Chemical mapping of a 207-nucleotide RNA with DMS and 2A3. It was measured as part of the RMDB library M2RFPK. 2A3 is a SHAPE reagent: it acylates the 2'-hydroxyl of flexible nucleotides of all four kinds. The RNA was probed in 150 mM KOAc, 10 mM MgCl2 and 150 mM bicine (pH 8.5) at 24 C.
RNA sequence: GGGAACGACUCGAGUAGAGUCGAAAAUCCACUAUGAAUCUAGUCACUAAAUAAACACAAUUAGCUACUGUGUGUAAUAGUGAGUGUUGAUAACACAAGAUAAUAGUAUAGUUUUGGAAGAUUAUACGCGCCCUUGCUCCGUUCGCGGAGCAAGGAAGUACAACGUAUGGUUCGCCAUACGUUGUACAAAAGAAACAACAACAACAAC
Reactivity to DMS in 0.01 (KOAc 150mM, MgCl2 10mM, bicine 150mM(pH8.5), 24C), signal-to-noise 2, nucleotides 027 to 156: u000c010c030a160c070u020a090u000g020a170a110u000c080u000a160g000u000c000a020c000u000a010a010a060u020a230a150a030c030a010c010a050a040u000u000a270g030c290u010a080c040u000g030u010g040u000g030u000a080a280u000a030g020u000g000a100g030u000g000u010u000g010a130u000a080a120c010a070c030a080a040g000a070u010a060a300u000a030g020u000a060u010a060g000u000u000u000u000g020g020a170a150g000a050u000u010a050u000a020c000g010c100g010c090c010c000u010u000g040c000u000c000c000g030u000u000c270g000c060g080g000a020g010c000a000a010g000g020a000a030
Reactivity to 2A3 in 0.01 (KOAc 150mM, MgCl2 10mM, bicine 150mM(pH8.5), 24C), signal-to-noise 5, nucleotides 027 to 156: u010c010c000a010c030u140a110u160g110a190a090u010c060u040a040g160u010c010a000c010u010a020a010a050u050a010a050a000c000a000c010a040a120u150u110a090g070c080u200a090c050u020g000u000g000u010g010u060a000a040u000a030g000u000g010a040g000u030g030u030u090g170a160u200a220a010c000a000c010a040a030g020a050u090a100a050u060a140g040u020a030u040a110g030u000u050u090u140g130g050a110a050g010a080u090u070a080u110a100c060g000c010g060c060c000c000u000u000g010c000u000c000c000g030u040u040c100g000c030g060g000a000g000c000a000a000g000g000a010a000